Structure probing data (DMS and 2A3) for a 170-nucleotide construct. The RNA was probed in 150 mM KOAc, 10 mM MgCl2 and 150 mM bicine (pH 8.5) at 24 C. For DMS the reverse transcriptase was MarathonRT. 2A3 adducts were read by reverse transcription with SuperScript II with manganese. For DMS, 10,450 sequencing reads were counted.

[RMDB]
RNA sequence: GGGAACGACUCGAGUAGAGUCGAAAAGUGAUCCACUGAGGGUUUGCGGAAAAAUCACCUCCAGAGGACCCCUUCAGCGAACGGAAGAGACUGGAAGCCCCAGAGGAAGACCAUAGCCAUGGGGAGAAUAGUCUAGGCUUCGGCCUAGACAAAAGAAACAACAACAACAAC
Reactivity to DMS in 0.01 (KOAc 150mM, MgCl2 10mM, bicine 150mM(pH8.5), 24C), signal-to-noise 5, nucleotides 027 to 129: g030u020g040a110u020c020c070a140c030u020g020a090g020g050g000u060u010u060g120c210g030g030a030a070a030a050a150u000c090a130c050c040u020c070c050a100g040a160g000g000a140c090c030c010c050u040u060c040a040g040c100g000a110a060c000g000g000a050a010g010a040g050a130c060u000g040g020a110a150g040c050c050c020c110a080g020a050g010g000a050a080g010a100c090c000a000u050a070g030c000c000a110u060g000g000g000g000a120g000a020a030u000a140
Reactivity to 2A3 in 0.01 (KOAc 150mM, MgCl2 10mM, bicine 150mM(pH8.5), 24C), signal-to-noise 4, nucleotides 027 to 129: g000u000g040a030u000c000c010a020c020u020g010a090g000g020g040u070u140u140g060c090g040g080a030a060a040a040a030u100c030a070c040c020u040c080c010a000g020a060g060g040a020c000c000c030c010u030u070c030a040g010c000g040a000a000c020g040g010a030a000g030a010g000a020c020u000g000g060a020a030g030c000c000c000c010a030g060a040g040g020a010a040g010a060c020c050a090u140a030g000c010c010a040u040g010g000g000g000a040g030a020a060u030a020